[RMDB]
RNA sequence: GGGAACGACUCGAGUAGAGUCGAAAAGAUUUAAACAGAUGGAGAUACACAAAUGUUUGAAUCACAGUAACAAAAAUCCUGGUAUCUCGGGUAUACAGUAGUGCAGAUACUGUAUUUUUAAUGCUCCUUAGGUUUUCCAUCUUCGGAUGGAAAACAAUGGUGUAAGUGUGUUCGCACACUUACACCAAAAAGAAACAACAACAACAAC
Reactivity to 2A3 in 0.01 (KOAc 150mM, MgCl2 10mM, bicine 150mM(pH8.5), 24C), signal-to-noise 1, nucleotides 027 to 156: g000a000u000u000u000a000a000a000c000a000g180a160u090g030g050a060g000a010u070a020c010a000c010a020a160a150u020g010u000u000u010g010a000a000u070c030a020c040a090g120u130a260a050c060a050a110a030a040a030u040c000c020u020g030g000u050a030u030c020u030c000g020g000g000u010a030u000a000c020a000g000u020a000g060u060g300c080a030g030a180u010a000c000u010g000u010a010u000u060u020u020u220a130a120u070g030c010u070c080c030u050u120a010g060g070u010u000u030u000c000c000a010u000c000u030u030c140g090g000a020u000g000g000a000a000a000a000c000a000a030